Chemical mapping of a 207-nucleotide RNA with 2A3 and DMS. For DMS, 2,079 sequencing reads were counted. It was measured as part of the RMDB library RNAMAK.
RNA sequence: GGGAACGACUCGAGUAGAGUCGAAAAGGUGCCUUCGGGCACCCUACACCGUAGGCGAUCGUAACAUCCUUGCAUAGGCUAUGAAGUGAGCUUCGAAAGAGGCUCAUGGAGCCUAUGAGGUGGAUCGCCUAAACGGAUUGAUACCCUUCGGGGUAAACUCAAUACACGGUUUCGACCGUGUAUUGAGAAAAGAAACAACAACAACAAC
Reactivity to 2A3 in 0.01 (KOAc 150mM, MgCl2 10mM, bicine 150mM(pH8.5), 24C), signal-to-noise 3, nucleotides 027 to 156: g040g000u010g030c060c060u070u110c300g030g000g000c020a020c020c000c010u030a030c050a020c000c010g020u030a020g010g010c000g000a010u000c010g020u030a030a050c080a300u300c010c010u050u200g140c000a020u000a000g020g000c000u050a140u300g010a040a000g000u000g000a000g000c000u010u000c000g010a020a030a040g010a000g000g000c010u000c000a000u010g000g000a000g000c000c000u000a000u000g000a000g000g000u000g010g000a000u010c000g040c000c000u000a000a000a000c000g000g040a030u060u160g090a040u130a110c020c000c000u000u100c220g070g010g010g000u030a080a020a020
Reactivity to DMS in 0.01 (KOAc 150mM, MgCl2 10mM, bicine 150mM(pH8.5), 24C), signal-to-noise 1, nucleotides 027 to 156: g000g020u010g050c000c000u000u010c230g050g030g020c000a010c000c000c010u010a070c040a150c010c000g010u050a050g030g010c000g000a030u000c030g060u000a160a150c020a170u010c000c010u000u000g000c030a050u000a010g030g010c000u000a130u050g010a180a300g010u000g020a010g000c010u000u010c000g010a200a170a250g000a020g030g000c020u000c000a030u000g010g010a010g040c010c010u000a000u000g010a040g020g010u040g000g010a010u000c000g050c000c000u000a000a020a030c050g010g050a200u000u000g000a250u000a040c020c000c000u000u010c160g090g030g030g030u010a020a040a070